Overview
This 207-nucleotide RNA was probed chemically with DMS and 2A3. The RNA was probed in 150 mM KOAc, 10 mM MgCl2 and 150 mM bicine (pH 8.5) at 24 C. It was measured as part of the RMDB library M2RFPK.

[RMDB]
RNA sequence: GGGAACGACUCGAGUAGAGUCGAAAAGAAAGAAAGUACUGAAAGUAUUGUGGGAAAUACUGUGUAAAUCAUUGACCGUUCCUGCGCUGGUAAGAAUAAAAUUUUAGUCCAGACACCACCAGUAUAACCAAUCUAGUGACCUUCGGGUCACUAGAAAGAUUAUAGAUCUGUUCGCAGAUCUAUAAUCAAAAGAAACAACAACAACAAC
Reactivity to DMS in 0.01 (KOAc 150mM, MgCl2 10mM, bicine 150mM(pH8.5), 24C), signal-to-noise 2, nucleotides 027 to 156: g020a170a080a130g010a120a060a140g040u000a110c050u000g010a160a090a140g010u010a030u000u000g010u000g020g040g020a100a110a020u010a020c010u000g000u000g020u000a050a080a060u010c030a070u010u010g000a080c050c030g000u000u000c020c020u000g020c130g050c040u000g010g000u000a080a110g000a050a100u010a050a050a060a300u040u000u000u000a160g010u010c000c040a150g020a110c020a020c070c010a010c030c000a110g010u000a050u000a060a150c000c050a050a190u000c010u000a000g010u000g020a020c010c000u000u010c300g030g040g000u010c000a010c000u000a000g000a010a000a150
Reactivity to 2A3 in 0.01 (KOAc 150mM, MgCl2 10mM, bicine 150mM(pH8.5), 24C), signal-to-noise 3, nucleotides 027 to 156: g070a020a110a000g060a020a100a000g030u050a030c040u040g020a090a070a000g060u080a080u100u120g020u060g020g030g030a030a160a060u040a020c020u010g020u020g040u140a010a050a130u100c020a080u060u170g050a030c000c040g010u050u040c020c010u030g000c080g000c050u020g000g020u070a040a040g050a070a060u180a140a130a070a070u080u090u050u060a040g020u000c010c000a000g020a050c010a020c050c010a010c000c010a010g010u040a020u020a130a010c040c030a000a050u010c000u000a000g000u000g010a000c010c000u010u030c140g070g000g000u000c000a000c000u000a000g000a000a000a000